[RMDB]
RNA sequence: GGGAACGACUCGAGUAGAGUCGAAAACGAGUCGACCUCUCCAUCGGCACGAGGACGUGCCUGGUUUUGAGUGGGGGAGGAUGUUACGGACAAAUUCCGUAACCGUGUGAGGCCAACAUCAAAGAUGCGUACCUAGCUGCGUUUCAACCUGCGUGGGGCCAUAUACGAUGUUCGCAUCGUAUAUGGCAAAAGAAACAACAACAACAAC
Reactivity to 2A3 in 0.01 (KOAc 150mM, MgCl2 10mM, bicine 150mM(pH8.5), 24C), signal-to-noise 4, nucleotides 027 to 156: c020g000a000g020u000c000g020a090c020c000u020c030u000c010c020a110u130c060g020g000c010a010c040g040a120g200g200a130c070g020u010g020c000c000u010g040g010u040u080u090u080g100a050g030u060g000g020g000g010g000a020g050g010a020u070g010u010u000a000c000g000g020a030c150a130a240a130u250u000c010c000g000u000a000a000c000c000g050u060g030u040g070a050g020g050c030c020a040a030c010a090u120c060a070a050a040g030a020u060g010c030g020u030a060c010c040u040a070g000c050u020g040c040g000u010u050u100c080a090a070c020c010u070g060c040g050u140g000g000g000
Reactivity to DMS in 0.01 (KOAc 150mM, MgCl2 10mM, bicine 150mM(pH8.5), 24C), signal-to-noise 1, nucleotides 027 to 156: c070g020a100g050u000c000g010a080c010c050u000c000u020c010c120a120u000c070g030g050c020a060c030g040a130g000g020a230c050g050u000g020c040c010u000g020g000u000u000u000u000g000a170g010u010g030g020g020g020g040a100g020g010a050u000g000u010u010a020c020g010g010a140c070a080a070a200u010u000c020c000g010u000a010a000c000c150g040u020g020u020g000a060g040g000c030c040a040a060c000a050u010c030a140a160a170g030a100u000g010c000g050u000a160c000c030u010a130g000c020u000g000c040g000u010u010u000c080a040a070c000c020u000g000c080g020u000g020g030g030
Structure probing data (2A3 and DMS) for a 207-nucleotide construct. For DMS the reverse transcriptase was MarathonRT. Source: RMDB library VIROID, as collected in RNAgym. Reactivities are given for positions 27 through 156. The DMS profile rests on 2,858 reads.